[RMDB]
RNA sequence: GGGAACGACUCGAGUAGAGUCGAAAACCGCCUAGCUUCGGCUAGGCGGAAAUAAGGGGCCAGCUCCAGGCCGCCAAACAAUAUGGAGCACAAAGAAUAAAAAAAUCGAAGAGUUCGCUCUUCGAAACACAGUAAUAAUGUUCGCAUUAUUACUGUGAAAAGAAACAACAACAACAAC
Reactivity to 2A3 in 0.01 (KOAc 150mM, MgCl2 10mM, bicine 150mM(pH8.5), 24C), signal-to-noise 2, nucleotides 027 to 126: c000c000g040c000c010u010a000g020c010u080u010c290g060g000c000u000a010g010g000c010g000g010a020a010a010u060a030a030g020g020g030g000c020c010a050g020c020u000c000c010a010g010g000c000c000g050c080c050a140a080a010c070a030a000u030a020u030g000g010a000g040c010a000c000a000a010a000g090a030a040u270a120a110a020a000a010a010a050u040c010g020a000a010g000a000g010u050u070c130g030c060u010c000u010u000c000g000a000a010a010
Reactivity to DMS in 0.01 (KOAc 150mM, MgCl2 10mM, bicine 150mM(pH8.5), 24C), signal-to-noise 2, nucleotides 027 to 126: c000c000g030c000c000u010a010g010c000u000u020c220g040g010c010u000a010g000g030c000g000g000a010a040a050u010a110a270g020g000g010g040c010c000a050g030c000u010c000c000a020g010g020c000c010g010c070c030a070a050a040c190a010a010u010a030u000g000g000a020g060c000a110c250a020a090a110g010a160a120u040a020a020a030a080a100a110a100u000c000g000a000a010g010a020g020u000u020c300g030c010u000c000u010u000c000g000a000a040a130